[RMDB]
RNA sequence: GGGAACGACUCGAGUAGAGUCGAAAACUGCACCCGUUGGUGUGUGAGGCGUUCAAUGCCGACUUCGACGGUGACCAGAUGGCCGUGCACCUGCCUUUGAGCGCCGAAGCGCAGGCCGAGGCUCGCAGCUCCACGUAAGGUUCGCCUUACGUGGAGCAAAAGAAACAACAACAACAAC
Reactivity to DMS in 0.01 (KOAc 150mM, MgCl2 10mM, bicine 150mM(pH8.5), 24C), signal-to-noise 2, nucleotides 027 to 126: c030u000g000c030a170c190c000c050g010u060u010g010g000u000g010u000g010u000g020a230g040g010c010g010u000u000c160a090a120u030g010c030c020g000a090c040u010u000c070g010a000c010g010g010u000g000a190c200c050a130g000a090u000g010g020c040c040g030u010g010c070a060c030c010u000g000c040c020u020u000u010g030a090g010c040g040c040c030g000a070a040g020c110g010c030a040g000g010c090c030g000a140g000g000c100u000c140g010c100a110
Reactivity to 2A3 in 0.01 (KOAc 150mM, MgCl2 10mM, bicine 150mM(pH8.5), 24C), signal-to-noise 2, nucleotides 027 to 126: c010u040g000c010a030c020c030c060g040u000u090g010g050u090g000u080g040u110g140a090g040g000c050g000u170u210c130a110a070u200g020c040c000g050a030c000u140u110c040g040a010c010g010g040u040g050a050c000c030a050g040a110u100g020g000c030c010g090u100g030c010a010c000c010u060g020c040c020u070u050u070g090a140g000c100g040c050c060g060a050a010g000c020g000c070a020g050g000c030c020g030a030g040g030c030u050c080g000c040a020
The data come from the RNA Mapping Database (RMDB), library OK2TRN. An RNA of 177 nucleotides, treated with DMS and 2A3 and read out base by base. For DMS, 1,534 sequencing reads were counted.